Structure probing data (2A3 and DMS) for a 177-nucleotide construct. The 2A3 profile rests on 4,960 reads. The reactions ran in a buffer of 150 mM KOAc, 10 mM MgCl2 and 150 mM bicine (pH 8.5), at 24 C. Reactivities are rounded to 0.1 and cut off at 0 and 3. It was measured as part of the RMDB library OK1LIB. For DMS the reverse transcriptase was MarathonRT. In probing experiments dimethyl sulfate is read out at A N1 and C N3, which are open when not base-paired.
RNA sequence: GGGAACGACUCGAGUAGAGUCGAAAAUCUAUUCUGGGAGCUUUAGUUCGGAAGUGAGGAUCGGGAUCAGUACCUCCCUUCCAAUCCCUCCUAUCUCUAGCAGGUAUAGUUUUGACAAUAAGAUAGAAUUUUGUAAUAAGUUCGCUUAUUACAAAAUAAAAGAAACAACAACAACAAC
Reactivity to 2A3 in 0.01 (KOAc 150mM, MgCl2 10mM, bicine 150mM(pH8.5), 24C), signal-to-noise 6, nucleotides 027 to 126: u030c010u010a050u120u030c050u060g040g030g040a050g030c030u170u170u160a050g080u110u140c110g010g000a010a010g010u020g010a020g010g030a070u080c080g040g060g070a080u160c080a060g040u100a110c010c000u000c030c000c000u000u000c000c000a010a030u020c010c000c000u010c010c000u030a050u060c030u000c010u030a050g040c060a040g050g060u100a060u050a080g060u050u050u070u150g060a060c060a070a070u140a170a060g060a080u140a090g130a110
Reactivity to DMS in 0.01 (KOAc 150mM, MgCl2 10mM, bicine 150mM(pH8.5), 24C), signal-to-noise 4, nucleotides 027 to 126: u010c010u000a020u020u010c030u010g000g010g010a060g000c150u010u010u040a050g020u010u050c130g010g010a020a030g010u000g010a080g030g000a210u020c120g020g000g040a090u060c120a130g010u010a280c050c030u000c020c080c020u000u000c000c020a080a100u010c060c090c020u000c060c020u000a040u000c030u000c040u030a070g010c050a020g030g000u010a030u010a040g000u000u000u010u000g010a080c110a070a100u030a070a070g010a080u030a050g010a130